The record gives the reactivity of an RNA of 177 nucleotides to 2A3 and DMS. It was measured as part of the RMDB library OK1LIB. Conditions: 150 mM KOAc, 10 mM MgCl2 and 150 mM bicine (pH 8.5), 24 C. For 2A3, 1,023 sequencing reads were counted.

[RMDB]
RNA sequence: GGGAACGACUCGAGUAGAGUCGAAAAGGUAUGGAUGUUGGGGAAUUUGUUAUACUUAUGCGUCGAUGUUUGCAUUAGAAGCUUUGCAUACAGUUGGUCUUGAUUAUGAAUCCUCAUCAGCUGUGAACUAAUGGCUCCAUUUCGAUGGAGCCAUUAGAAAAGAAACAACAACAACAAC
Reactivity to 2A3 in 0.01 (KOAc 150mM, MgCl2 10mM, bicine 150mM(pH8.5), 24C), signal-to-noise 3, nucleotides 027 to 126: g180g030u180a090u230g060g010a050u040g030u030u050g000g040g000g050a070a090u090u050u020g120u070u050a170u030a120c010u070u020a050u080g070c030g130u080c020g080a090u020g040u040u080u050g080c040a030u030u070a100g080a090a050g080c120u110u080u090g010c000a090u010a080c050a020g010u000u000g060g000u000c010u080u080g040a070u080u120a100u100g130a050a050u080c020c020u030c000a020u000c030a020g020c020u010g020u000g010a030a070
Reactivity to DMS in 0.01 (KOAc 150mM, MgCl2 10mM, bicine 150mM(pH8.5), 24C), signal-to-noise 2, nucleotides 027 to 126: g010g000u030a000u000g000g020a080u010g010u000u000g000g000g040g010a070a140u020u010u000g000u000u000a100u000a090c070u000u000a040u030g020c040g020u000c050g030a050u000g000u010u000u030g000c000a040u000u020a030g000a080a100g010c070u000u020u000g000c040a060u000a030c040a020g000u000u000g000g000u000c130u010u000g000a070u000u000a100u030g020a040a090u000c010c000u000c070a030u000c050a010g010c010u000g000u020g020a070a180